[RMDB]
RNA sequence: GGGAACGACUCGAGUAGAGUCGAAAAGAUACCGCUUAUUUUCUGUGAAUUUUUUGUUGGACUUUAGACUGUAUAAGGUCAAAUCUUCCGUAUCGACAUCUAUUAAUGUGAAUGGUUGAUAGGUUCUCACGUGACAGUUUGAAUUCUCUGGCGCUAAAAACGGGUAAAAUUUCGAUUUUACCCGUUUAAAAGAAACAACAACAACAAC
Reactivity to DMS in 0.01 (KOAc 150mM, MgCl2 10mM, bicine 150mM(pH8.5), 24C), signal-to-noise 1, nucleotides 027 to 156: g000a120u000a100c040c000g030c090u000u010a150u000u010u000u000c030u020g020u010g020a080a040u000u010u000u010u000u000g030u000u000g000g000a120c040u000u000u000a060g000a090c030u000g010u000a120u000a050a070g010g020u010c030a020a050a140u010c030u000u000c010c030g030u020a110u000c120g010a040c040a010u010c030u040a130u030u000a030a050u010g010u000g030a050a130u000g020g020u000u010g020a040u000a050g020g010u000u000c050u000c010a100c070g030u000g000a070c040a060g000u000u000u000g000a050a100u000u000c060u010c010u000g020g040c020g060c070u000a020a080
Reactivity to 2A3 in 0.01 (KOAc 150mM, MgCl2 10mM, bicine 150mM(pH8.5), 24C), signal-to-noise 1, nucleotides 027 to 156: g060a030u100a020c000c000g060c050u010u050a180u050u140u020u050c130u060g190u040g090a120a110u090u040u090u000u060u060g030u000u100g010g010a010c000u050u000u030a030g000a070c030u030g060u110a060u010a130a040g030g000u010c000a000a000a150u010c000u000u020c010c000g020u040a170u080c000g060a000c010a030u030c030u150a080u200u150a150a020u090g030u000g050a080a070u050g010g000u010u010g040a030u050a110g000g010u000u080c070u000c020a030c080g050u120g050a050c010a020g000u050u080u040g060a030a000u110u010c050u010c020u030g000g070c000g090c280u300a000a000